The record gives the reactivity of an RNA of 177 nucleotides to 2A3 and DMS. The reactions ran in a buffer of 150 mM KOAc, 10 mM MgCl2 and 150 mM bicine (pH 8.5), at 24 C. It was measured as part of the RMDB library TTRDEL. DMS (dimethyl sulfate) methylates the pairing face of unpaired adenines and cytosines. Values cover nucleotides 27 to 126. For DMS, 1,994 sequencing reads were counted. For DMS the reverse transcriptase was MarathonRT. 2A3 is a SHAPE reagent: it acylates the 2'-hydroxyl of flexible nucleotides of all four kinds.
[RMDB]
RNA sequence: GGGAACGACUCGAGUAGAGUCGAAAAGAUAUGGAUCCAGAACUACUCCCUUCCUAUGAAGUAAAUCGGAAACGAUUUAUGGAGGAACCAGCUGGAUCCUAAGUCAAAAGGCCAGUUCGCUGGCCAACUUAUUGUGGUUGUUCGCAACCACAAUAAGAAAAGAAACAACAACAACAAC
Reactivity to 2A3 in 0.01 (KOAc 150mM, MgCl2 10mM, bicine 150mM(pH8.5), 24C), signal-to-noise 2, nucleotides 027 to 126: g030a040u050a040u050g000g020a020u000c000c010a020g090a300a130c140u260a130c070u300c180c040c060u060u040c120c010u300a300u300g020a030a000g000u000a000a030a000u000c000g020g000a010a010a050c000g020a000u000u030u000a010u030g000g020a000g000g020a010a030c070c020a050g150c020u030g000g000a000u000c000c010u020a020a000g010u000c010a030a090a070a070g030g000c000c010a020g030u050u080c270g040c080u000g000g000c000c000a010a020
Reactivity to DMS in 0.01 (KOAc 150mM, MgCl2 10mM, bicine 150mM(pH8.5), 24C), signal-to-noise 3, nucleotides 027 to 126: g010a040u000a100u010g000g000a020u000c000c000a010g000a090a140c120u000a170c160u010c050c050c070u000u000c010c040u000a250u020g010a130a220g010u000a000a000a000u000c010g000g010a060a060a080c000g010a010u000u000u010a000u000g010g010a030g000g010a020a030c190c140a040g010c030u000g000g000a010u000c000c000u000a000a060g000u010c040a060a060a100a160g010g010c000c010a010g020u010u020c190g010c000u000g010g010c010c010a010a000